[RMDB]
RNA sequence: GGGAACGACUCGAGUAGAGUCGAAAAUUCUGCAUGCUGGGCAGUCAAGAUUAAGGGACUACAUGCAUCUGGUGAAGACCUUCUUGCUAUAUGAUAACAUGGCAGAAUGUAUCACAUAGUAAGACAGCAUGCAAGAAGAAAGGAAAGGAAAAGGGGAAUCAGUACCAUCAUUCGUGAUGGUACUGAUAAAAGAAACAACAACAACAAC
Reactivity to 2A3 in 0.01 (KOAc 150mM, MgCl2 10mM, bicine 150mM(pH8.5), 24C), signal-to-noise 9, nucleotides 027 to 156: u030u010c000u030g000c000a010u010g000c000u020g010g070g030c040a040g040u050c050a070a070g030a170u130u270a110a110g090g010g020a040c050u070a030c080a090u160g060c020a070u030c050u090g030g010u060g060a100a030g060a060c010c010u010u010c010u000u010g000c000u000a000u000a000u030g020a010u040a150a100c010a020u040g170g020c040a050g140a210a020u020g010u000a000u000c000a000c000a010u000a000g000u000a000a000g010a010c000a000g000c000a010u010g000c010a000a030g010a000a010g010a030a040a010g060g010a070a040a030g030g010a060a070a020a030g020g000g000g010a000
Reactivity to DMS in 0.01 (KOAc 150mM, MgCl2 10mM, bicine 150mM(pH8.5), 24C), signal-to-noise 3, nucleotides 027 to 156: u000u000c030u040g000c030a060u010g030c000u000g000g010g020c060a090g010u000c060a100a180g020a250u000u000a130a120g010g020g010a100c020u000a010c030a070u010g000c070a140u000c040u010g000g030u000g010a170a070g020a070c050c010u000u000c000u000u010g010c010u000a010u000a020u000g010a040u000a040a040c020a050u010g030g040c170a160g000a080a070u000g030u000a020u000c000a010c000a040u000a020g010u000a040a050g010a060c030a080g000c020a040u000g030c000a040a090g000a030a050g010a080a070a080g020g000a050a060a070g000g010a020a050a070a080g010g030g030g050a150